[RMDB]
RNA sequence: GGGAACGACUCGAGUAGAGUCGAAAAUCCUUACCGCCGGAGGGGCUAGGGUUCCUUGGCAAUGUUCGUCAGCCAAGGGUUAGUCGAUCCUAAGGUCAGUCAUAAGUUGAGCUGGUCGAAAGGGAAGCCUAGGAUACAUGUUCGCAUGUAUCCUAGGAAAAGAAACAACAACAACAAC
Reactivity to 2A3 in 0.01 (KOAc 150mM, MgCl2 10mM, bicine 150mM(pH8.5), 24C), signal-to-noise 8, nucleotides 027 to 126: u010c000c000u000u170a040c010c020g040c030c050g040g020a040g010g090g000g000c000u010a010g060g050g070u130u170c000c000u000u000g000g000c080a070a090u070g050u120u160c170g100u100c100a160g280c050c000a000a000g020g000g000u000u030a020g010u000c030g060a040u030c000c000u020a100a020g010g000u000c000a000g000u000c010a020u080a300a040g130u110u090g040a040g050c000u010g000g010u020c010g030a130a090a080g010g010g030a040a000g020
Reactivity to DMS in 0.01 (KOAc 150mM, MgCl2 10mM, bicine 150mM(pH8.5), 24C), signal-to-noise 6, nucleotides 027 to 126: u010c000c000u010u010a110c070c030g020c130c120g010g010a080g010g000g000g010c020u000a030g000g010g010u020u020c010c000u010u000g000g000c010a080a050u030g030u010u030c160g020u010c060a180g000c010c000a010a010g010g000g010u020u000a020g010u000c030g010a110u010c010c000u000a100a210g010g010u000c020a010g010u000c050a070u030a120a140g030u010u000g010a140g010c010u010g000g010u000c020g000a070a070a100g000g010g000a100a140g010